Background: Structure probing data (2A3 and DMS) for a 207-nucleotide construct. It was measured as part of the RMDB library M2RFPK. Reactivities are rounded to 0.1 and cut off at 0 and 3. The DMS profile rests on 2,243 reads. The reactions ran in a buffer of 150 mM KOAc, 10 mM MgCl2 and 150 mM bicine (pH 8.5), at 24 C. DMS adducts were read by reverse transcription with MarathonRT. For 2A3 the reverse transcriptase was SuperScript II with manganese.
RNA sequence: GGGAACGACUCGAGUAGAGUCGAAAAGGGACGCCUUUAGAAGAAGAGGCUAGGUGGUAUUCCGGUGUGGGAUACUUGGUAAUAUGUAACGCUAAUUGCAUAAGAUUGUAGGACCGAAUUUACAGUCAAAACGGUCCUGCGUUCGCGCAGGACCGAACGUGAAAAUUGAGUUCGCUCAAUUUUCACGAAAAGAAACAACAACAACAAC
Reactivity to 2A3 in 0.01 (KOAc 150mM, MgCl2 10mM, bicine 150mM(pH8.5), 24C), signal-to-noise 4, nucleotides 027 to 156: g030g010g020a030c050g010c020c000u070u090u110a220g030a250a030g030a040a020g020a050g010g020c040u050a020g000g060u050g010g010u050a050u050u050c060c030g060g070u170g030u130g080g000g000a010u020a040c000u010u100g020g010u080a060a080u030a090u080g040u030a040a000c050g010c190u090a100a090u100u050g010c010a030u010a110a040g020a040u030u090g010u020a030g000g060a040c030c030g010a030a010u060u040u050a050c020a010g050u020c030a010a010a090a070c010g010g000u000c000c000u000g000c000g010u010u030c180g000c000g000c050a000g000g000a000c010c000g000a010a000
Reactivity to DMS in 0.01 (KOAc 150mM, MgCl2 10mM, bicine 150mM(pH8.5), 24C), signal-to-noise 1, nucleotides 027 to 156: g010g000g000a110c110g020c030c000u000u000u000a120g020a140a220g010a080a090g000a040g000g040c000u000a060g020g030u000g010g020u000a050u010u010c010c000g010g050u000g000u000g020g030g010a070u000a010c000u020u000g030g020u000a060a150u000a070u000g010u000a040a120c050g000c080u010a080a110u000u000g000c000a070u000a070a150g000a080u000u030g030u000a070g000g000a120c020c080g050a060a250u020u010u000a070c060a080g000u000c020a050a040a070a160c040g020g000u010c010c000u010g020c010g020u010u010c230g000c070g100c000a050g010g000a020c000c030g000a010a030